[RMDB]
RNA sequence: GGGAACGACUCGAGUAGAGUCGAAAAAUUGAGCAAACACAGUGAUUAUCAACGCUAUAGAACGCGGGUGGUAUCCAAUGCCGAUAAAGUCAAUCUGAAUUUUGCAGCAGCACGACCCGCAUUGGAAAUUAAUAGUAUCGUUCGCGAUACUAUUAAUAAAAGAAACAACAACAACAAC
Reactivity to 2A3 in 0.01 (KOAc 150mM, MgCl2 10mM, bicine 150mM(pH8.5), 24C), signal-to-noise 6, nucleotides 027 to 126: a000u090u100g030a030g040c050a050a080a020c020a020c030a090g050u060g110a110u060u100a030u110c020a030a050c020g000c010u060a040u050a300g110a140a040c070g020c010g010g050g060u040g010g020u010a050u000c010c010a020a040u030g000c020c020g060a040u110a120a120a000g020u030c010a030a130u010c040u060g070a160a170u090u100u100u280g050c070a060g000c010a010g000c010a010c060g030a030c020c000c000g030c000a010u010u030g010g010a030a140
Reactivity to DMS in 0.01 (KOAc 150mM, MgCl2 10mM, bicine 150mM(pH8.5), 24C), signal-to-noise 9, nucleotides 027 to 126: a100u010u000g010a100g010c050a060a060a070c130a090c100a070g020u000g010a100u010u000a050u010c040a070a080c030g010c040u010a240u010a130g010a090a070c160g010c030g010g020g030u000g010g010u000a050u000c020c020a040a060u000g010c020c080g010a090u010a040a070a070g010u010c050a140a180u010c050u000g010a080a090u000u000u000u000g010c110a060g000c080a030g000c190a090c170g000a050c040c020c100g010c050a030u000u000g000g000a050a090